[RMDB]
RNA sequence: GGGAACGACUCGAGUAGAGUCGAAAAUGAGUGGUUUGAUGCCGGUGGCUUAGGUCCAAGUACACUACCCACUAGUCAUGAACGGUACACACAUGAGAAUGAUGAAGGCCACCAGGUAAAGUGGUCGCCGAUUAACCCGAUUCGUCGGGUUAAUCGGAAAAGAAACAACAACAACAAC
Reactivity to 2A3 in 0.01 (KOAc 150mM, MgCl2 10mM, bicine 150mM(pH8.5), 24C), signal-to-noise 3, nucleotides 027 to 126: u200g000a070g020u070g030g140u080u050u110g120a070u070g040c070c050g010g020u030g000g030c020u050u090a060g010g020u000c020c020a040a030g110u090a080c080a010c010u160a110c020c000c050a040c060u050a030g010u010c030a090u060g090a120a030c060g010g030u110a050c040a000c010a000c000a030u130g010a020g140a280a110u230g070a050u170g090a150a000g000g000c010c000a000c000c000a060g060g120u190a050a100a020g000u000g000g010u000c000g000
Reactivity to DMS in 0.01 (KOAc 150mM, MgCl2 10mM, bicine 150mM(pH8.5), 24C), signal-to-noise 2, nucleotides 027 to 126: u000g070a110g020u000g000g010u000u010u000g010a130u010g000c050c010g010g030u020g010g000c030u000u000a010g000g010u000c030c100a090a140g010u020a110c140a060c080u000a080c210c010c070a080c100u000a120g020u000c010a060u050g000a080a090c080g050g000u000a050c150a050c120a150c000a000u030g000a180g000a110a050u010g000a090u020g010a150a110g020g030c000c000a020c000c050a040g040g000u000a070a080a110g000u000g010g000u000c010g010